[RMDB]
RNA sequence: GGGAACGACUCGAGUAGAGUCGAAAAUCAAACGAUUUCGAUCGUUUGAAACGGACCACUCCUGCGGGAGUAAAGGCCAUACGGACAGCCGGGUCCACUGCCAGUCAUUCGGUUUCGACCGAAUGAAAUGUACGAACAGAUUCGUCUGUUCGUACAUAAAAGAAACAACAACAACAAC
Reactivity to 2A3 in 0.01 (KOAc 150mM, MgCl2 10mM, bicine 150mM(pH8.5), 24C), signal-to-noise 3, nucleotides 027 to 126: u030c000a000a000a010c000g010a000u030u090u140c220g110a020u000c000g000u000u000u000g000a020a000a010c070g000g000a010c000c010a010c020u000c000c000u060g020c290g090g010g000a000g010u030a100a060a050g010g000c010c010a040u060a060c080g010g000a010c010a010g010c000c000g020g010g000u000c020c000a000c020u030g000c010c000a040g070u010c000a000u000u010c000g020g030u030u050u100c210g100a020c000c000g000a000a000u000g000a010a010
Reactivity to DMS in 0.01 (KOAc 150mM, MgCl2 10mM, bicine 150mM(pH8.5), 24C), signal-to-noise 4, nucleotides 027 to 126: u000c000a000a000a000c000g000a010u000u000u000c190g010a030u000c000g000u000u000u000g000a010a100a130c190g000g000a010c000c000a100c000u000c000c000u010g040c180g040g010g000a020g020u000a020a070a070g010g030c010c020a110u000a080c150g000g000a020c040a210g000c010c010g010g000g000u010c000c010a080c150u020g010c010c020a080g000u000c000a010u000u000c000g010g010u000u000u010c190g000a030c000c000g000a000a000u000g000a010a040

Structure probing data (2A3 and DMS) for a 177-nucleotide construct. The 2A3 profile rests on 8,958 reads. The RNA was probed in 150 mM KOAc, 10 mM MgCl2 and 150 mM bicine (pH 8.5) at 24 C. Reactivities are given for positions 27 through 126. For DMS the reverse transcriptase was MarathonRT.